The data come from the RNA Mapping Database (RMDB), library OK3TST. An RNA of 207 nucleotides, treated with DMS and 2A3 and read out base by base. For 2A3 the reverse transcriptase was SuperScript II with manganese.
[RMDB]
RNA sequence: GGGAACGACUCGAGUAGAGUCGAAAAUCGUGUCUGUACGAGCUGAUGCGACGACUGUAGAUACAGAAGAACCCGAAUCUUCACUACGGGUAACCGGGACACGAUAGCCUCAUAACAUGAGCUGUCGUGUCCCGCAAGGCUUGCUAACAUGGCAAGCGAUGAUUUCGGUAUUCGUACCGAAGUUAUCAAAAGAAACAACAACAACAAC
Reactivity to DMS in 0.01 (KOAc 150mM, MgCl2 10mM, bicine 150mM(pH8.5), 24C), signal-to-noise 7, nucleotides 027 to 156: u000c030g040u000g020u000c020u000g020u000a090c160g020a240g020c050u000g000a080u000g010c040g020a070c040g010a080c030u000g020u000a060g010a150u000a300c080a120g010a040a090g000a050a100c020c020c090g000a070a120u000c050u010u000c060a160c030u000a100c010g020g020g010u010a050a090c090c010g000g010g000a020c000a020c000g000a020u000a030g000c110c020u000c030a000u000a120a140c070a300u000g010a020g000c010u000g010u000c000g020u000g000u000c000c000c000g000c020a030a080g020g020c020u000u000g010c000u010a000a140c150a020u000g010g000c000a010a010g010c020
Reactivity to 2A3 in 0.01 (KOAc 150mM, MgCl2 10mM, bicine 150mM(pH8.5), 24C), signal-to-noise 4, nucleotides 027 to 156: u040c010g010u010g020u000c000u010g050u040a080c070g030a070g040c030u030g010a010u020g000c020g010a020c020g010a010c020u010g010u020a000g030a080u080a100c050a030g040a040a010g000a030a030c000c000c020g020a030a060u020c020u050u030c050a020c060u050a010c010g000g000g000u010a010a010c020c010g000g000g000a000c000a000c000g000a000u000a000g010c010c020u010c000a000u000a060a050c040a080u040g000a000g000c000u000g000u000c000g000u000g000u000c000c000c000g000c000a000a000g030g000c000u000u000g000c000u020a000a020c030a010u090g010g000c000a000a000g000c010
Reactivities are given for positions 27 through 156.